[RMDB]
RNA sequence: GGGAACGACUCGAGUAGAGUCGAAAAUUUAACAUUUUGCAGGCGACAACUGCUAAUGUCAGUGCACUUAUGGGUGCUAAUGGCAACAAGAUUGUUGACAAAGAAGUUAAAGACAUGCAGUUUGAUUACCCCUUAUUACGUUCGCGUAAUAAGGGGUAAAAGAAACAACAACAACAAC
Reactivity to DMS in 0.01 (KOAc 150mM, MgCl2 10mM, bicine 150mM(pH8.5), 24C), signal-to-noise 1, nucleotides 027 to 126: u000u000u040a020a060c050a090u000u000u000u000g030c180a120g020g030c000g000a040c180a010a000c030u000g030c160u060a020a110u010g000u000c030a010g000u030g000c020a010c000u000u000a170u010g070g000g000u000g010c020u000a040a130u000g010g000c000a020a060c040a160a100g010a250u000u000g000u000u000g020a020c020a070a130a060g000a090a130g010u000u000a030a020a160g000a070c220a060u010g010c060a040g030u010u000u000g010a300u000u010
Reactivity to 2A3 in 0.01 (KOAc 150mM, MgCl2 10mM, bicine 150mM(pH8.5), 24C), signal-to-noise 1, nucleotides 027 to 126: u070u060u040a100a010c010a010u000u050u080u050g050c040a040g090g050c010g060a020c010a040a020c030u000g000c040u060a060a030u000g000u040c000a010g000u000g050c000a000c010u130u170a100u300g290g000g000u010g000c000u010a110a080u060g010g070c000a040a020c010a100a000g060a190u110u080g010u030u010g010a010c030a010a120a020g050a080a010g000u090u090a080a010a000g040a030c030a000u100g000c020a030g000u040u020u050g010a010u010u020

An RNA of 177 nucleotides, treated with DMS and 2A3 and read out base by base. 2A3 adducts were read by reverse transcription with SuperScript II with manganese. Conditions: 150 mM KOAc, 10 mM MgCl2 and 150 mM bicine (pH 8.5), 24 C.